Notes
This 207-nucleotide RNA was probed chemically with 2A3 and DMS. For DMS the reverse transcriptase was MarathonRT. For 2A3, 4,230 sequencing reads were counted. The data come from the RNA Mapping Database (RMDB), library OK3TST. The reactions ran in a buffer of 150 mM KOAc, 10 mM MgCl2 and 150 mM bicine (pH 8.5), at 24 C. Reactivities are rounded to 0.1 and cut off at 0 and 3. Values cover nucleotides 27 to 156.

[RMDB]
RNA sequence: GGGAACGACUCGAGUAGAGUCGAAAAUGCGCUUUAUAGAAUCGCAACGUCUCGCCGUCCCCGGGGGGGUGAUCUCCCCCGAGCACGUCGCGUACCUUGGUGCGUUCCUGAGCGUGCUGUACGCUGGCCGCGGGCGCAUGUCCGCAGCCACGCACACGCUCCAUGCUAAAUUCGUUUAGCAUGGAGCAAAAGAAACAACAACAACAAC
Reactivity to 2A3 in 0.01 (KOAc 150mM, MgCl2 10mM, bicine 150mM(pH8.5), 24C), signal-to-noise 5, nucleotides 027 to 156: u060g000c020g010c040u110u140u140a250u130a160g120a080a060u100c010g000c020a030a050c020g030u000c020u020c060g040c000c010g050u050c000c010c020c000g000g010g000g000g000g000g010u130g220a150u080c020u030c000c000c000c000c000g000a000g010c020a000c000g060u090c030g010c010g040u040a040c020c040u080u210g120g000u020g010c020g030u060u070c020c050u060g000a030g020c010g000u010g020c040u040g040u030a040c080g030c110u010g000g010c010c000g010c000g000g000g000c080g000c170a200u300g010u000c000c000g000c000a000g000c010c010a010c050g020c000a020c000a010c050
Reactivity to DMS in 0.01 (KOAc 150mM, MgCl2 10mM, bicine 150mM(pH8.5), 24C), signal-to-noise 1, nucleotides 027 to 156: u000g020c010g010c040u020u020u020a140u010a120g010a040a060u010c050g020c000a090a060c060g010u000c010u000c020g070c070c030g000u000c030c010c000c000g030g030g060g040g090g110g040u020g010a210u000c030u010c000c000c000c000c000g060a020g000c100a030c000g040u010c070g040c020g000u000a050c060c050u000u000g020g040u000g000c020g020u000u000c000c020u010g010a070g020c040g030u000g020c070u000g050u000a020c030g010c070u010g080g030c000c020g000c020g000g020g040c010g000c210a100u010g030u010c000c000g040c010a000g010c000c000a000c020g020c010a040c020a080c140